Conditions: 150 mM KOAc, 10 mM MgCl2 and 150 mM bicine (pH 8.5), 24 C. Chemical mapping of a 177-nucleotide RNA with 2A3. It was measured as part of the RMDB library RFM100. Reactivities are rounded to 0.1 and cut off at 0 and 3. Reactivities are given for positions 27 through 126. 2A3 adducts were read by reverse transcription with SuperScript II with manganese.

RNA sequence: GGGAACGACUCGAGUAGAGUCGAAAAGCAAACGCUGCAAAAACUAGAUUCAGUCAAGGACAUUUACUUUGGCUACGUUGGUCCAACCGAAUACGGGCUUCUGAUUCCAUGAAGAGCUUUUGCAAUUCGACAACUACCAUUUCGAUGGUAGUUGUCGAAAAGAAACAACAACAACAAC
Reactivity to 2A3 in 0.01 (KOAc 150mM, MgCl2 10mM, bicine 150mM(pH8.5), 24C), signal-to-noise 2, nucleotides 027 to 126: g000c000a020a000a030c050g000c020u050g050c010a020a000a040a050a070c040u070a120g020a150u100u100c080a000g050u020c040a040a020g020g060a060c050a160u080u220u250a070c120u010u020u070g000g030c000u050a010c030g110u050u030g010g020u000c060c000a030a020c080c030g030a030a010u070a140c110g010g000g000c000u000u070c000u060g050a170u000u100c060c050a020u040g010a000a010g070a020g040c000u020u030u020u090g000c000a010a080u000u050